Chemical mapping of a 207-nucleotide RNA with 2A3 and DMS.

[RMDB]
RNA sequence: GGGAACGACUCGAGUAGAGUCGAAAACAAGAAAGAAGAGUCCGAUAUUGGCAAGGUGGUUGCGGACACCAUCAAGGUGCUUAACGAUACCAGCCUAUUCAAUCAGGAUGCCCUUAGCAAGGCCGCCGUGAAUAUGCUGACUGAGCAGGGCGUGGUCCCAUUCGCUGUUAUUCGUAACAGCGAAUGGAAAAGAAACAACAACAACAAC
Reactivity to 2A3 in 0.01 (KOAc 150mM, MgCl2 10mM, bicine 150mM(pH8.5), 24C), signal-to-noise 2, nucleotides 027 to 156: c040a000a050g110a140a070a010g100a050a020g040a020g040u040c050c030g030a100u070a070u210u160g050g000c040a040a050g010g000u020g000g040u040u080g050c030g030g020a000c010a020c020c000a020u090c040a030a120g050g020u020g020c040u120u100a110a020c050g060a050u090a080c030c010a010g020c000c000u020a060u020u040c030a040a110u050c030a050g020g000a020u040g000c030c000c010u060u040a030g010c060a030a010g020g000c010c020g000c000c000g000u050g040a040a000u090a030u080g000c010u010g040a140c010u060g030a030g060c040a020g000g040g000c030g040u040g020g000u080c000
Reactivity to DMS in 0.01 (KOAc 150mM, MgCl2 10mM, bicine 150mM(pH8.5), 24C), signal-to-noise 1, nucleotides 027 to 156: c130a080a150g010a010a060a060g010a050a080g020a180g000u000c050c020g000a080u010a050u000u000g010g010c070a130a050g050g020u000g050g040u000u010g010c050g000g040a060c030a050c000c010a130u030c160a170a150g030g020u000g000c040u020u000a050a050c020g000a250u000a050c100c000a150g000c030c050u000a050u030u000c000a020a100u020c050a080g010g010a280u020g020c070c000c010u000u020a170g000c140a100a220g020g010c010c030g020c000c000g010u000g020a070a080u000a040u000g010c000u000g000a140c000u020g000a120g090c010a090g000g070g020c020g000u000g040g000u000c040
Description:
DMS adducts were read by reverse transcription with MarathonRT. The DMS profile rests on 1,507 reads. Values cover nucleotides 27 to 156. Conditions: 150 mM KOAc, 10 mM MgCl2 and 150 mM bicine (pH 8.5), 24 C.